[RMDB]
Record summary:
Chemical mapping of a 177-nucleotide RNA with DMS. Reactivities are given for positions 27 through 126. For DMS, 2,684 sequencing reads were counted. The RNA was probed in 150 mM KOAc, 10 mM MgCl2 and 150 mM bicine (pH 8.5) at 24 C.
RNA sequence: GGGAACGACUCGAGUAGAGUCGAAAAGAUAUGGAACGCCACGAUAAGAGGCUAUCGGAAACGAUAGGCCUCUUUUGACGUGGCUUCCUAAGUCAAAGAAGGCAUGGGGUUCGCCCCAUGCCUUCAACUUUACAAGGUUCUUCGGAACCUUGUAAAGAAAAGAAACAACAACAACAAC
Reactivity to DMS in 0.01 (KOAc 150mM, MgCl2 10mM, bicine 150mM(pH8.5), 24C), signal-to-noise 2, nucleotides 027 to 126: g010a040u000a280u020g000g000a010a000c170g010c010c000a000c010g000a150u000a010a010g020a010g000g000c000u000a000u010c000g010g000a070a050a090c010g010a010u000a010g010g010c000c000u000c000u000u000u000u020g010a160c040g000u000g010g000c010u000u000c000c000u010a030a110g000u000c020a100a080a180g020a030a010g010g010c000a000u010g000g010g010g020u000u010c230g010c010c010c020c000a000u010g000c000c000u000u000c010a010a060